[RMDB]
RNA sequence: GGGAACGACUCGAGUAGAGUCGAAAAGAAGGGGUCAAUGGCCGUUACGCUAAUUCAGUAAGCCUGGAAUUUUGUCUGAUCUUGAGGAAAAGGGGAAGCGUUAAAAACAGUUAUCAAUAUAGAAUGUUAACAUGAAAGGGUUCGCCCUUUCAUGUUAAAAAGAAACAACAACAACAAC
Reactivity to 2A3 in 0.01 (KOAc 150mM, MgCl2 10mM, bicine 150mM(pH8.5), 24C), signal-to-noise 4, nucleotides 027 to 126: g090a040a010g000g020g030g010u090c070a020a150u070g020g050c060c050g070u120u050a000c000g000c030u040a060a080u080u020c000a000g060u030a060a030g070c010c010u020g040g010a050a030u030u060u120u080g110u010c020u000g030a080u070c060u090u080g030a040g040g030a030a080a070a030g000g030g010g000a020a020g020c010g020u040u060a020a080a000a010a000c020a000g000u010u050a060u170c090a140a030u120a010u000a120g120a060a060u120g010u040
Reactivity to DMS in 0.01 (KOAc 150mM, MgCl2 10mM, bicine 150mM(pH8.5), 24C), signal-to-noise 4, nucleotides 027 to 126: g020a120a080g000g000g010g010u010c070a080a080u020g010g010c060c090g000u000u000a050c110g030c040u020a080a090u030u010c060a070g010u030a080a070g020c120c010u000g000g030a050a080u020u000u000u000g000u000c050u000g000a050u020c060u010u000g010a060g000g000a020a030a080a040g010g010g010g000a070a080g010c070g000u000u010a030a060a030a060a040c120a070g010u010u000a120u020c080a040a060u020a080u010a110g000a140a080u030g000u010